The record gives the reactivity of an RNA of 177 nucleotides to DMS and 2A3. DMS adducts were read by reverse transcription with MarathonRT. Source: RMDB library OK2TST, as collected in RNAgym. 2A3 adducts were read by reverse transcription with SuperScript II with manganese. Conditions: 150 mM KOAc, 10 mM MgCl2 and 150 mM bicine (pH 8.5), 24 C. The 2A3 profile rests on 930 reads.

RNA sequence: GGGAACGACUCGAGUAGAGUCGAAAACAUGUUGAAGGAGAUGGUGUAGUGGAAGGGAUUAUCCGUUAUCAUCCAUUCUUAUAUGAUAGAGAAACUUACCCUGAUGAUCCAUGCUUUCCAUCAAGUAGGUGUUAUACGGGUUCGCCCGUAUAACACCAAAAGAAACAACAACAACAAC
Reactivity to DMS in 0.01 (KOAc 150mM, MgCl2 10mM, bicine 150mM(pH8.5), 24C), signal-to-noise 2, nucleotides 027 to 126: c060a050u010g020u010u000g010a070a130g000g000a070g000a060u010g000g030u010g000u000a070g050u000g000g000a100a070g010g000g000a130u000u000a140u010c020c130g010u010u010a070u000c040a010u010c110c080a140u010u000c110u000u000a150u030a070u010g010a060u000a080g020a120g000a070a080a070c100u010u000a170c020c010c020u030g040a030u010g010a130u000c030c010a040u000g030c050u010u000u000c010c020a060u010c070a060a020g000u010a050
Reactivity to 2A3 in 0.01 (KOAc 150mM, MgCl2 10mM, bicine 150mM(pH8.5), 24C), signal-to-noise 2, nucleotides 027 to 126: c000a000u090g020u150u140g080a130a080g100g070a110g010a030u040g000g060u070g030u040a090g050u030g050g020a040a030g110g030g010a020u160u000a020u090c030c010g060u050u020a040u040c030a060u010c090c000a090u190u130c030u160u230a300u000a030u160g000a000u080a070g130a000g040a020a210a010c020u020u040a070c010c000c000u030g030a040u050g030a000u010c020c090a010u000g000c060u100u220u020c020c020a030u000c010a000a100g030u120a020